[RMDB]
RNA sequence: GGGAACGACUCGAGUAGAGUCGAAAAGAUAUGGAGGGAGGUGCUGUGGUCGCUACAUCGGAAACGAUGUAAAAGUCCACAGAACUACACUCUCCUAAGUCAAAACAUCCUGCUUCGGCAGGAUGAACAUAAUACUCGUGUUCGCACGAGUAUUAUGAAAAGAAACAACAACAACAAC
Reactivity to DMS in 0.01 (KOAc 150mM, MgCl2 10mM, bicine 150mM(pH8.5), 24C), signal-to-noise 9, nucleotides 027 to 126: g010a040u000a300u010g000g000a010g010g000g030a090g020g010u000g000c000u000g010u000g000g010u000c020g010c240u000a010c000a000u000c000g010g000a130a100a220c000g010a010u000g010u000a000a060a140a180g000u000c000c000a000c000a010g010a020a030c030u010a080c300a080c000u000c000u000c000c000u000a020a090g000u010c040a080a060a100a210c010a010u000c000c000u000g000c000u000u010c180g020g010c000a010g000g000a000u000g000a030a160
Reactivity to 2A3 in 0.01 (KOAc 150mM, MgCl2 10mM, bicine 150mM(pH8.5), 24C), signal-to-noise 7, nucleotides 027 to 126: g030a030u080a040u160g000g010a010g000g030g000a070g000g010u040g020c010u010g010u010g000g010u010c020g010c070u020a010c000a010u000c000g010g000a090a070a040c020g000a000u000g000u000a030a100a030a080g020u000c000c000a000c000a000g010a020a000c010u080a040c040a050c020u030c000u000c000c000u030a150a020g060u020c040a020a000a070a130c000a000u000c000c000u000g010c000u050u050c240g170g000c000a000g010g000a000u000g000a000a000

An RNA of 177 nucleotides, treated with DMS and 2A3 and read out base by base. For DMS the reverse transcriptase was MarathonRT. The data come from the RNA Mapping Database (RMDB), library TTRDEL. The reactions ran in a buffer of 150 mM KOAc, 10 mM MgCl2 and 150 mM bicine (pH 8.5), at 24 C.